[RMDB]
RNA sequence: GGGAACGACUCGAGUAGAGUCGAAAAUCGGGGAAGGGUGAGAACCUUCGACUAAGGUUCGAUUCGAGCGAAAGCGAGAGAGCGUUGCCACAGGCAACGGCCCGAAGGUGAGGAGCGAAGCGACGAAUCACCAUUAAAGCUUCGGCUUUAAUGGUGAAAAAGAAACAACAACAACAAC
Reactivity to DMS in 0.01 (KOAc 150mM, MgCl2 10mM, bicine 150mM(pH8.5), 24C), signal-to-noise 9, nucleotides 027 to 126: u020c070g010g020g010g010a100a070g010g000g010u010g000a190g010a060a030c020c010u000u000c240g020a130c180u020a080a030g010g010u010u000c010g000a140u020u010c040g000a250g000c020g000a090a060a130g000c020g010a170g000a090g000a100g010c000g000u000u000g000c000c020a150c230a120g000g010c010a010a020c010g000g000c020c000c020g000a060a070g000g000u010g000a090g010g000a090g000c070g010a060a080g010c070g000a100c110g010a130a120
Reactivity to 2A3 in 0.01 (KOAc 150mM, MgCl2 10mM, bicine 150mM(pH8.5), 24C), signal-to-noise 7, nucleotides 027 to 126: u110c020g000g000g010g020a050a020g030g010g020u070g020a090g020a040a030c000c000u010u020c070g060a050c040u090a050a020g030g010u020u030c020g010a090u040u040c020g000a010g010c020g040a100a040a000g030c040g000a020g000a000g010a010g090c010g000u000u010g020c000c020a230c090a240g010g000c010a020a010c010g030g040c000c000c010g010a020a000g020g030u080g030a070g030g010a020g020c060g040a070a020g010c020g060a070c020g020a070a060
Record summary
The record gives the reactivity of an RNA of 177 nucleotides to DMS and 2A3. It was measured as part of the RMDB libraries RFM100 and RFMREP. The RNA was probed in 150 mM KOAc, 10 mM MgCl2 and 150 mM bicine (pH 8.5) at 24 C. DMS adducts were read by reverse transcription with MarathonRT.